[RMDB]
RNA sequence: GGGAACGACUCGAGUAGAGUCGAAAAAUCACCGGUGGGGAACCCCAUACGGCAACGGCGUAGAAGUAAGUGCUAACCAAUCCGUGGUAUCUACGCGACGGAGCAUCCACGGAUAACUCUAACAAGGCUAAGCGUCUCGGUUUCGACCGAGACGCAACAAAAGCACAUGAUUCGUCAUGUGCUUUUGAAAAGAAACAACAACAACAAC
Reactivity to DMS in 0.01 (KOAc 150mM, MgCl2 10mM, bicine 150mM(pH8.5), 24C), signal-to-noise 2, nucleotides 027 to 156: a140u000c050a060c000c020g030g080u000g030g000g050g020a060a060c210c000c010c000a050u000a100c020g040g070c020a050a090c000g010g020c010g000u000a000g000a060a210g020u020a080a090g030u020g040c050u000a060a170c100c030a090a120u000c010c000g000u000g000g000u000a100u000c040u000a050c010g000c020g010a120c040g070g000a110g020c070a140u000c000c000a020c010g030g000a040u000a020a070c110u010c030u000a090a170c110a070a090g010g020c110u000a060a190g030c000g030u000c000u000c010g040g050u000u000u000c300g010a070c000c000g010a000g020a000c000g010c000a000a050
Reactivity to 2A3 in 0.01 (KOAc 150mM, MgCl2 10mM, bicine 150mM(pH8.5), 24C), signal-to-noise 2, nucleotides 027 to 156: a000u070c030a000c020c000g000g000u020g000g000g000g110a050a070c050c020c000c010a020u140a150c010g010g040c070a080a050c030g020g000c020g000u020a000g000a140a020g060u130a110a030g040u060g090c030u030a080a120c060c040a040a040u000c000c000g000u000g000g000u010a010u050c000u000a040c030g000c010g070a030c070g110g030a030g050c020a060u050c000c000a000c000g000g000a000u000a000a020c020u050c070u150a060a070c070a120a030g090g030c040u210a100a050g010c010g000u000c000u020c000g010g050u030u050u100c210g020a030c000c000g000a000g000a000c000g000c000a000a000